[RMDB]
RNA sequence: GGGAACGACUCGAGUAGAGUCGAAAAGAUGUCACCUAAAUCCAUCGCAGAUAAAUAUAACUGCUAAAAAUAACACUUCUUACGCACUCGCUGCCUAAACACCAGCUUGCGUAGCUGAUGAUCGUUCGCCGAUGGCGGCCUGAAGCUCUAAACCUCAGGAAUAACAAGGCUUCGGCCUUGUUAUUCCAAAAGAAACAACAACAACAAC
Reactivity to 2A3 in 0.01 (KOAc 150mM, MgCl2 10mM, bicine 150mM(pH8.5), 24C), signal-to-noise 2, nucleotides 027 to 156: g080a030u060g020u070c040a110c080c020u070a060a010a050u060c060c050a020u070c110g000c010a000g030a110u190a090a230a080u150a050u060a220a090c010u070g000c010u050a040a020a020a000a190u140a110a000c020a010c020u070u070c040u060u120a020c010g000c030a070c070u070c090g010c010u020g000c010c010u030a040a040a010c000a010c000c000a000g010c000u020u000g030c000g010u010a010g020c020u060g010a150u050g040a050u100c050g080u100u070c030g020c030c000g080a010u130g020g020c010g010g000c020c010u080g010a020a040g010c020u020c040u070a050a050a050c060c070u140c070a000
Overview:
Conditions: 150 mM KOAc, 10 mM MgCl2 and 150 mM bicine (pH 8.5), 24 C. An RNA of 207 nucleotides, treated with 2A3 and read out base by base.